[RMDB]
Overview
Chemical mapping of a 177-nucleotide RNA with DMS and 2A3. The data come from the RNA Mapping Database (RMDB), library M2PK50.
RNA sequence: GGGAACGACUCGAGUAGAGUCGAAAAGUAUAUGACUUCGGUCAUAUACAAAGGCCGAUCGAAGGCCAACAGGGACUUCAACGCCAACCGAUCAAGAAGAAAAAAGAUGCACCUUCGGGUGCAUCAAGGAUACGUGUUAGUUCGCUAACACGUAUCCAAAAGAAACAACAACAACAAC
Reactivity to DMS in 0.01 (KOAc 150mM, MgCl2 10mM, bicine 150mM(pH8.5), 24C), signal-to-noise 2, nucleotides 027 to 126: g000u000a000u000a040u000g000a060c000u000u000c160g030g010u010c000a030u000a000u000a000c010a000a180a080g000g020c050c020g000a170u000c110g020a010a020g030g010c020c000a070a040c230a150g010g000g000a040c010u000u000c020a060a280c190g000c030c020a020a120c070c000g020a050u000c150a030a130g000a070a120g000a000a070a090a050a090a100g000a000u000g000c000a000c000c000u000u000c250g020g000g030u000g010c000a000u000c000a090a080
Reactivity to 2A3 in 0.01 (KOAc 150mM, MgCl2 10mM, bicine 150mM(pH8.5), 24C), signal-to-noise 2, nucleotides 027 to 126: g000u000a000u000a010u000g000a000c010u010u070c240g060g010u000c000a000u000a000u000a000c000a010a070a040g010g020c040c020g010a080u190c100g060a090a010g010g000c000c000a000a010c030a010g000g010g000a010c010u030u000c030a080a000c010g000c010c000a040a050c020c020g050a100u140c110a080a120g140a100a050g090a060a180a010a010a000a020g000a000u000g000c010a020c010c020u050u090c290g110g000g000u020g030c000a000u000c000a000a000